[RMDB]
RNA sequence: GGGAACGACUCGAGUAGAGUCGAAAAAUGGAAUAAUGUUAAACCGGAUUCUGCAUAAUAUGAUGGUAUAGGUGCCGUACCGCCUAAGUAGCCGGUUGCCGAAGACUGCCCCGCAACUGCAUUUAUGUCACGAUAAGGGAUUCGUCCCUUAUCGUGAAAAAGAAACAACAACAACAAC
Reactivity to DMS in 0.01 (KOAc 150mM, MgCl2 10mM, bicine 150mM(pH8.5), 24C), signal-to-noise 2, nucleotides 027 to 126: a090u000g000g010a040a050u010a050a070u000g020u010u010a040a060a080c020c020g010g000a260u010u000c080u010g020c080a060u000a090a080u000a120u010g000a100u010g000g000u000a010u020a030g000g020u000g000c040c030g020u010a030c040c040g020c030c020u030a030a120g030u020a080g000c020c030g000g020u000u000g020c030c050g010a080a070g010a100c060u000g000c020c010c010c070g010c110a040a050c130u000g020c090a060u000u020u010a060u050g000
Reactivity to 2A3 in 0.01 (KOAc 150mM, MgCl2 10mM, bicine 150mM(pH8.5), 24C), signal-to-noise 1, nucleotides 027 to 126: a000u150g030g020a040a060u150a010a160u130g090u180u140a090a050a000c030c030g030g050a040u150u060c010u090g000c090a040u030a100a110u180a170u300g090a070u130g040g050u030a060u060a080g090g000u000g090c080c040g010u030a060c000c030g090c030c030u070a150a030g020u060a000g120c010c020g000g000u010u020g000c000c030g000a060a000g000a060c030u070g020c010c000c030c030g060c020a050a000c040u010g000c020a000u000u000u150a100u220g080
An RNA of 177 nucleotides, treated with DMS and 2A3 and read out base by base. Values cover nucleotides 27 to 126. For DMS the reverse transcriptase was MarathonRT.